[RMDB]
Notes
Chemical mapping of a 177-nucleotide RNA with 2A3 and DMS. It was measured as part of the RMDB library OK2TST. Reactivities are given for positions 27 through 126. Conditions: 150 mM KOAc, 10 mM MgCl2 and 150 mM bicine (pH 8.5), 24 C. The DMS profile rests on 1,571 reads.
RNA sequence: GGGAACGACUCGAGUAGAGUCGAAAACAUGUGAUGCACUUGGUGUCGCGCGUGGUAGGUCAGUUACGUGAAGAUUUGGAUGCUCUGCACGCUUAUCAAGCUUGCAUGAACAUGGGCACGCUGACUAGCCAUAUGCUGCUUUCGAGCAGCAUAUGGCAAAAGAAACAACAACAACAAC
Reactivity to 2A3 in 0.01 (KOAc 150mM, MgCl2 10mM, bicine 150mM(pH8.5), 24C), signal-to-noise 2, nucleotides 027 to 126: c030a020u110g010u050g050a080u050g040c040a030c070u160u080g110g030u050g040u050c040g000c010g000c010g060u060g100g000u060a070g020g000u000c000a010g040u110u230a050c050g050u090g090a090a080g060a300u090u150u150g150g020a010u060g080c000u000c000u010g000c000a000c000g000c000u060u130a260u180c040a000a000g030c090u080u030g000c000a020u110g000a010a040c010a000u050g020g030g000c010a010c030g000c030u020g020a020c020u070a030
Reactivity to DMS in 0.01 (KOAc 150mM, MgCl2 10mM, bicine 150mM(pH8.5), 24C), signal-to-noise 2, nucleotides 027 to 126: c030a040u000g020u010g020a070u000g040c040a080c030u000u010g040g030u000g020u000c160g030c030g020c040g030u000g000g000u020a090g030g000u020c010a040g010u010u020a120c130g040u000g010a110a100g010a160u000u000u020g010g010a060u000g000c010u000c020u000g000c000a020c060g030c010u000u020a090u030c300a030a020g020c040u000u000g010c060a000u000g050a030a040c010a010u010g020g000g000c050a020c080g030c040u000g000a060c090u000a210